[RMDB]
RNA sequence: GGGAACGACUCGAGUAGAGUCGAAAAAGGAAGGAUCAUUAUCGAGUUUUGACCGGGUUGUAGCUGGCCUUCCGAGGCAUGUGCACGCCCUGCUCAUCCACUCUACACCUGUGCACUUACUGUGGGCUUCAGAUUGCGAGGCACGCUCUUUACCGGGCUUGCGGAGCAUAUCUGUGCCUGCGUUUAUCACAAACUCUAUAAAGUAACAGAAUGUGUAUUGCGAUGUAACACAUCUAUAUACAACUUUCAGCAACGGAUCUCUUGAAACAAUGUACUUCGGUACAUUGAAAAGAAACAACAACAACAAC
Reactivity to 2A3 in 0.01 (KOAc 150mM, MgCl2 10mM, bicine 150mM(pH8.5), 24C), signal-to-noise 8, nucleotides 027 to 266: a000g080g020a040a010g030g010a050u080c030a070u070u110a040u120c070g000a030g020u040u090u070u130g080a050c030c020g000g020g020u110u250g030u060a030g000c080u050g040g020c020c000u100u000c030c050g010a030g000g030c040a040u230g040u080g090c020a020c100g020c010c000c000u000g010c030u020c020a060u020c020c010a050c020u040c010u040a040c030a040c040c030u040g060u090g040c070a050c100u070u100a050c050u190g010u030g010g000g010c010u250u180c020a000g000a010u000u010g000c000g010a010g090g000c000a000c020g010c000u010c000u050u150u080a110c080c070g010g000g000c000u000u000g000c000g020g020a010g000c000a010u050a010u070c000u000g010u010g000c000c000u000g000c000g000u040u070u060a210u150c020a010c020a080a070a020c020u040c020u030a080u050a160a160a040g080u080a100a030c030a080g060a070a040u050g010u000g000u020a010u010u050g050c020g010a010u010g040u160a180a020c070a000c030a220u000c050u010a040u000a010u010a060c050a140a130c070u030u070u040c040a050g060c040a060a060c050g090g080a090u030c070u010c000u100u080g060a080a020a030
Reactivity to DMS in 0.01 (KOAc 150mM, MgCl2 10mM, bicine 150mM(pH8.5), 24C), signal-to-noise 7, nucleotides 027 to 266: a100g010g010a070a050g000g000a090u010c040a120u010u000a060u010c050g020a030g000u000u010u000u000g010a080c100c180g010g000g010u000u020g040u000a030g040c230u000g010g000c020c010u000u000c190c080g020a060g010g000c040a030u000g010u010g020c010a060c110g000c050c050c020u000g000c100u000c040a050u010c080c100a080c070u010c020u000a070c070a060c090c040u000g020u000g010c140a080c190u000u000a020c060u020g060u000g010g000g000c020u010u000c010a000g000a020u000u000g010c010g000a300g010g010c000a010c080g010c010u000c000u000u000u030a100c300c180g000g000g010c000u010u000g000c000g000g020a300g000c010a020u010a000u000c000u000g010u000g000c000c000u000g020c030g010u010u000u000a060u010c060a070c090a060a050a050c030u000c040u010a070u010a060a050a090g000u010a070a070c110a110g000a040a010u000g000u000g010u000a010u000u000g000c080g000a010u000g000u010a110a100c140a300c010a000u000c000u010a120u000a010u000a010c000a040a080c020u010u000u000c000a150g010c090a080a080c080g010g010a060u000c030u000c020u000u000g000a150a070a190
The record gives the reactivity of an RNA of 307 nucleotides to 2A3 and DMS. The reactions ran in a buffer of 150 mM KOAc, 10 mM MgCl2 and 150 mM bicine (pH 8.5), at 24 C. For DMS the reverse transcriptase was MarathonRT. The DMS profile rests on 25,763 reads.